[RMDB]
RNA sequence: GGGAACGACUCGAGUAGAGUCGAAAAGUCACUUUGACCCCGCUGUGUUUGCCGCCAGCCAGGGGGCAUAUGGAGGUGUGUGUGACAAUUGCCGGGACCACACCGAAGGCAAGAACUGUGAGCGGUAACCAGUACUACGAUUCGUCGUAGUACUGGUAAAAGAAACAACAACAACAAC
Reactivity to DMS in 0.01 (KOAc 150mM, MgCl2 10mM, bicine 150mM(pH8.5), 24C), signal-to-noise 5, nucleotides 027 to 126: g000u000c020a090c130u000u010u000g010a120c020c000c010c020g000c050u000g020u020g000u000u000u000g010c030c040g010c030c040a090g010c030c100a120g010g010g010g000g010c010a050u000a080u000g010g010a210g010g010u000g010u020g000u000g030u000g000a070c060a070a150u000u000g000c030c020g000g000g000a100c050c020a040c050a040c020c010g010a110a110g000g000c080a040a080g010a110a130c090u000g020u010g000a100g010c020g000g010u000a130
Reactivity to 2A3 in 0.01 (KOAc 150mM, MgCl2 10mM, bicine 150mM(pH8.5), 24C), signal-to-noise 3, nucleotides 027 to 126: g010u010c000a030c100u070u140u180g110a200c000c000c010c000g080c070u030g050u030g060u070u070u150g040c010c020g000c000c020a010g020c000c030a020g020g020g000g080g000c020a140u220a110u190g150g030a060g000g010u000g000u020g010u000g010u010g020a030c010a080a090u110u110g040c010c000g000g020g020a020c000c020a000c000a000c020c020g010a040a020g070g030c030a020a080g060a090a060c080u140g000u060g170a000g030c030g000g000u010a020